[RMDB]
The record gives the reactivity of an RNA of 177 nucleotides to DMS and 2A3. The 2A3 profile rests on 1,330 reads. For DMS the reverse transcriptase was MarathonRT. High DMS reactivity at an A or C suggests that its Watson-Crick edge is free.
RNA sequence: GGGAACGACUCGAGUAGAGUCGAAAACAGUGAUGACCGGGGAGGAUACGUUUCACUAUGAGAGCCUGCGUGGACGUUAUGUGAGCGUGAUGGCCGGACCGGUUUUACAAAUCAGUAAGCAGGUCAGGAUAUACGAGGGGUUCGCCCCUCGUAUAUCAAAAGAAACAACAACAACAAC
Reactivity to DMS in 0.01 (KOAc 150mM, MgCl2 10mM, bicine 150mM(pH8.5), 24C), signal-to-noise 3, nucleotides 027 to 126: c080a110g000u000g020a070u010g020a060c040c010g010g020g000g020a180g010g010a150u000a020c020g000u010u010u000c010a030c030u000a080u010g010a180g020a140g020c020c010u010g010c180g040u010g020g010a040c060g000u020u000a080u010g020u020g010a060g010c010g000u000g010a080u000g020g010c010c010g010g010a140c040c010g000g000u000u000u000u000a050c140a070a100a100u010c090a100g020u010a080a080g030c040a020g020g010u010c040a130g000
Reactivity to 2A3 in 0.01 (KOAc 150mM, MgCl2 10mM, bicine 150mM(pH8.5), 24C), signal-to-noise 2, nucleotides 027 to 126: c030a040g020u040g130a070u070g000a000c000c000g080g000g020g010a160g020g000a050u100a110c010g000u050u270u230c030a000c010u050a040u130g080a120g020a030g170c000c040u120g020c170g090u300g060g010a030c060g040u120u050a130u160g020u020g060a020g000c010g000u060g100a130u140g160g000c000c000g000g030a030c010c010g000g000u000u000u020u070a000c000a010a070a040u050c040a000g120u120a030a010g010c060a010g000g040u020c040a000g140